[RMDB]
RNA sequence: GGGAACGACUCGAGUAGAGUCGAAAAAGGUGCGUGCGGCAAGCACCUUGUCGAGAAGCGCCUUCGGCAUGGCUUCGCCGGUGCGAUAGUGCACGGCGUAUUUUUCGAGAACGGCUGGAACGGUCAAAAUGCUGGAGUAGUUCGCUACUCCAGCAUUAAAAGAAACAACAACAACAAC
Reactivity to 2A3 in 0.01 (KOAc 150mM, MgCl2 10mM, bicine 150mM(pH8.5), 24C), signal-to-noise 1, nucleotides 027 to 126: a000g010g010u040g010c010g040u080g020c030g000g030c030a010a000g020c000a060c050c000u000u000g050u010c050g010a030g000a150a050g030c000g000c000c000u050u020c030g010g020c030a050u080g120g000c000u070u060c050g010c040c000g080g040u050g000c000g110a220u120a170g180u220g110c000a000c010g010g000c000g000u000a050u030u140u010u000u030c030g030a030g000a090a030c030g040g000c000u040g030g100a070a070c090g020g050u020c000a000a010
Reactivity to DMS in 0.01 (KOAc 150mM, MgCl2 10mM, bicine 150mM(pH8.5), 24C), signal-to-noise 3, nucleotides 027 to 126: a010g000g020u000g020c010g000u010g000c040g010g000c030a080a140g010c050a050c040c000u000u000g010u000c040g000a070g010a030a100g010c060g000c030c010u000u000c070g010g020c020a070u000g010g010c110u020u000c080g010c000c020g010g040u000g020c010g000a140u000a130g000u010g000c000a050c060g010g000c000g000u010a010u000u020u010u000u000c030g000a060g010a100a100c110g000g000c010u000g000g020a060a090c090g010g000u000c100a090a090

Structure probing data (2A3 and DMS) for a 177-nucleotide construct. Reactivities are given for positions 27 through 126. Reactivities are rounded to 0.1 and cut off at 0 and 3. For DMS, 3,322 sequencing reads were counted.